[RMDB]
RNA sequence: GGGAACGACUCGAGUAGAGUCGAAAAAAAAAUAGACGCAAGCUGCGACUCAAUCCAAUAAUAAAUGGAGCCGUGUACGGCAAAUGGCAAGCGAAAGGAACGCAGCAAAACCAGCCAUACAAAAAAACAGUAUAACUAGGUUCGCCUAGUUAUACUGAAAAGAAACAACAACAACAAC
Reactivity to 2A3 in 0.01 (KOAc 150mM, MgCl2 10mM, bicine 150mM(pH8.5), 24C), signal-to-noise 1, nucleotides 027 to 126: a000a000a000a000a000u110a040g020a010c020g010c020a000a040g020c030u060g020c040g070a060c020u040c170a000a110u030c010c040a030a050u190a200a030u080a040a090a070u010g020g020a050g000c020c050g080u080g130u160a040c050g070g000c070a100a170a000u060g000g000c030a010a030g050c060g110a110a020a000g080g020a070a040c010g000c000a010g000c000a120a050a010a000c000c010a000g020c000c000a030u030a080c120a080a110a000a040a000a020a040
Reactivity to DMS in 0.01 (KOAc 150mM, MgCl2 10mM, bicine 150mM(pH8.5), 24C), signal-to-noise 1, nucleotides 027 to 126: a020a120a050a080a120u030a030g010a060c040g000c040a110a110g020c010u000g090c000g000a090c120u040c060a070a160u000c030c060a140a050u000a100a120u050a090a080a060u000g010g010a100g000c050c100g080u000g000u010a100c000g000g020c000a030a030a060u000g000g000c070a040a070g000c030g000a070a060a170g010g010a040a030c040g010c000a060g000c010a040a020a110a070c040c050a030g010c000c000a040u000a070c070a000a000a060a020a090a030a120
Background:
Chemical mapping of a 177-nucleotide RNA with 2A3 and DMS. For DMS the reverse transcriptase was MarathonRT.